[RMDB]
RNA sequence: GGGAACGACUCGAGUAGAGUCGAAAAAAACUCCUGCCUUGGGGUCUACUCACUUAAAGCAUUCAUUUAAUACCUGCUUUCUGCAUAGGUACUGUAUUAGAUUCUUUGAGGGUACGAAGAAUAAAAUGAAUGUGGUCUCUGCUCUCAGUAACAGCUACACUAUGCGCUGAUUCGUCAGCGCAUAGUGAAAAGAAACAACAACAACAAC
Reactivity to 2A3 in 0.01 (KOAc 150mM, MgCl2 10mM, bicine 150mM(pH8.5), 24C), signal-to-noise 2, nucleotides 027 to 156: a020a000a020c050u040c050c010u010g020c000c060u020u070g010g000g030g010u040c030u070a060c000u010c030a050c030u050u170a040a000a040g010c000a030u040u000c000a010u000u050u150a120a050u010a030c010c020u060g030c010u080u080u200c150u130g040c040a010u050a110g000g000u040a060c030u040g030u040a060u060u100a080g060a080u070u030c030u040u030u040g060a060g090g010g040u010a060c090g020a020a030g030a100a040u150a030a120a030a030u030g000a050a040u030g000u060g040g020u020c030u010c000u020g000c010u020c000u000c010a000g030u040a080a020c010a080g050c010u090a030

An RNA of 207 nucleotides, treated with 2A3 and read out base by base. For 2A3, 660 sequencing reads were counted.